[RMDB]
RNA sequence: GGGAACGACUCGAGUAGAGUCGAAAAGCCUCGGUCAAUAAAGAGGUGUUCCAUCCCAACCUCAAUUUCUAAAGGCAGCAGAAGGGGAUGGCAGAAAAUACUCUAGAUCAGCAGGUGUGGGUCCUGGGCUCCACCAUAGAUUCGUCUAUGGUGGAGCAAAAGAAACAACAACAACAAC
Reactivity to DMS in 0.01 (KOAc 150mM, MgCl2 10mM, bicine 150mM(pH8.5), 24C), signal-to-noise 1, nucleotides 027 to 126: g000c020c020u000c050g010g010u010c050a170a080u010a030a170a110g000a000g000g040u010g010u000u000c020c040a100u000c030c000c000a140a110c040c040u000c060a110a060u010u000u010c100u010a080a120a190g000g030c070a080g020c080a040g010a110a070g020g010g010g010a000u000g010g030c280a060g000a070a070a060a060u010a030c040u000c040u000a070g000a050u000c130a070g060c130a030g000g040u000g050u000g000g010g010u000c030c040u000g000g000
Reactivity to 2A3 in 0.01 (KOAc 150mM, MgCl2 10mM, bicine 150mM(pH8.5), 24C), signal-to-noise 1, nucleotides 027 to 126: g000c010c010u000c030g080g050u110c100a190a110u050a180a240a010g020a020g030g020u060g030u100u080c020c000a010u000c000c000c010a010a100c000c000u080c040a120a200u130u180u100c060u220a190a090a040g070g000c030a090g030c040a020g070a190a010g060g010g000g010a040u030g030g000c000a010g180a060a050a000a030u120a030c020u000c010u030a030g000a060u080c070a010g030c050a010g000g000u030g050u080g120g130g000u030c000c020u060g050g090

The record gives the reactivity of an RNA of 177 nucleotides to DMS and 2A3. Reactivities are given for positions 27 through 126. The reactions ran in a buffer of 150 mM KOAc, 10 mM MgCl2 and 150 mM bicine (pH 8.5), at 24 C. It was measured as part of the RMDB library OK2TRN.